[RMDB]
RNA sequence: GGGAACGACUCGAGUAGAGUCGAAAAGAUAUGGAACGUAGAAAGCUUUGAUCGUGUGUGUCGGAAACGACACCACGGGAGCUUCUACGUUCCUAAGUCAAAAGGGCUUCUGCUUCGGCAGAAGCCCGCGUAUGUAUCACUUCGGUGAUACAUACGCAAAAGAAACAACAACAACAAC
Reactivity to 2A3 in 0.01 (KOAc 150mM, MgCl2 10mM, bicine 150mM(pH8.5), 24C), signal-to-noise 3, nucleotides 027 to 126: g000a000u010a010u030g000g000a000a000c000g000u000a020g080a230a300a030g020c040u300u300u020g010a010u010c000g000u010g010u010g000u000g000u010c000g000g010a000a010a000c000g000a000c000a000c000c000a000c000g000g000g000a000g000c000u000u030c000u000a000c000g010u010u000c000c000u000a000a000g000u000c000a000a000a050a160g010g010g000c000u010u000c000u010g040c000u060u080c300g150g000c000a000g000a010a010g000c000c000c000
Reactivity to DMS in 0.01 (KOAc 150mM, MgCl2 10mM, bicine 150mM(pH8.5), 24C), signal-to-noise 2, nucleotides 027 to 126: g010a010u000a040u020g000g000a000a000c000g010u000a000g010a050a020a030g030c000u000u000u010g000a020u010c010g000u000g000u020g020u000g030u000c000g020g010a010a000a030c010g010a020c010a010c000c000a000c010g000g000g000a000g030c000u000u000c010u000a000c000g000u000u000c000c000u000a010a050g010u000c010a070a080a180a230g040g010g010c000u010u000c010u000g000c010u000u010c260g030g020c000a020g000a010a010g010c000c000c000

Chemical mapping of a 177-nucleotide RNA with 2A3 and DMS. 2A3 adducts were read by reverse transcription with SuperScript II with manganese. Reactivities are rounded to 0.1 and cut off at 0 and 3. The DMS profile rests on 4,575 reads. The RNA was probed in 150 mM KOAc, 10 mM MgCl2 and 150 mM bicine (pH 8.5) at 24 C. Source: RMDB library TTRDES, as collected in RNAgym.